Source information: Conditions: 150 mM KOAc, 10 mM MgCl2 and 150 mM bicine (pH 8.5), 24 C. Structure probing data (DMS and 2A3) for a 177-nucleotide construct. Reactivities are given for positions 27 through 126. As a SHAPE reagent, 2A3 marks flexible, mostly unpaired nucleotides at the ribose 2'-OH. The 2A3 profile rests on 9,757 reads. For 2A3 the reverse transcriptase was SuperScript II with manganese. DMS adducts were read by reverse transcription with MarathonRT. The DMS profile rests on 18,038 reads. It was measured as part of the RMDB library OK2TRN.

RNA sequence: GGGAACGACUCGAGUAGAGUCGAAAAGACAUUCAACUCUUGGAACUUGCAGCAGAGAAAUGGAUGUAAUGUGGUGGAUACCGUAUGAGGAGUAUGCUCUGAUAAGAAGGGGAGUGGCCCAUGCUGCGUCAUAGUGUAAGUUCGCUUACACUAUGACAAAAGAAACAACAACAACAAC
Reactivity to DMS in 0.01 (KOAc 150mM, MgCl2 10mM, bicine 150mM(pH8.5), 24C), signal-to-noise 9, nucleotides 027 to 126: g010a070c040a040u000u000c040a050a130c140u000c020u000u000g020g010a080a090c090u000u010g010c040a040g020c040a120g010a040g000a040a080a140u000g010g000a040u000g010u000a060a080u000g010u000g010g020u000g010g000a090u010a060c060c050g010u010a060u000g010a110g010g000a080g020u000a070u010g010c030u000c030u010g010a130u010a060a100g010a090a100g010g000g010g000a060g020u010g000g000c010c020c030a080u010g010c040u000g010c160
Reactivity to 2A3 in 0.01 (KOAc 150mM, MgCl2 10mM, bicine 150mM(pH8.5), 24C), signal-to-noise 6, nucleotides 027 to 126: g020a000c010a020u030u040c030a110a110c040u020c020u070u100g090g040a080a060c020u060u150g010c040a040g000c000a010g030a000g000a080a100a060u070g020g020a010u010g030u090a070a100u140g020u080g030g030u020g000g050a060u060a100c020c020g020u060a080u110g080a060g040g010a040g040u090a070u100g030c010u000c020u050g060a100u040a190a040g120a070a030g000g010g020g010a030g020u060g040g020c000c000c000a020u080g000c010u050g000c020